[RMDB]
RNA sequence: GGGAACGACUCGAGUAGAGUCGAAAAUAUCCACCGGGUAGUUUCCAACGCCGGCUGGUGUGAAGAAGGAGCCGUUCCACGCAGGACGCGAACAAGAAGAAACCGAAGCAACUUCAGGUCGCCGCGCACGAACUGGCGCUCGAUCUCCGCCUCGCUCGUCAUUGUAGAACUUCGGUUCUACAAUGACAAAAGAAACAACAACAACAAC
Reactivity to 2A3 in 0.01 (KOAc 150mM, MgCl2 10mM, bicine 150mM(pH8.5), 24C), signal-to-noise 1, nucleotides 027 to 156: u200a020u010c020c020a050c030c020g000g080g060u010a060g030u010u000u000c040c010a180a110c140g060c070c020g030g030c030u010g000g050u060g100u040g020a100a110g010a040a080g050g030a010g000c000c000g020u060u000c050c000a060c050g030c030a030g020g100a110c090g000c010g070a070a030c050a120a110g060a020a040g050a110a050a000c040c070g090a070a000g000c050a030a050c000u080u060c030a010g100g000u010c000g010c030c010g080c010g000c000a100c080g010a100a000c070u230g100g000c040g000c050u010c010g060a110u000c020u030c030c010g060c030c000u080c070g050c040u060c070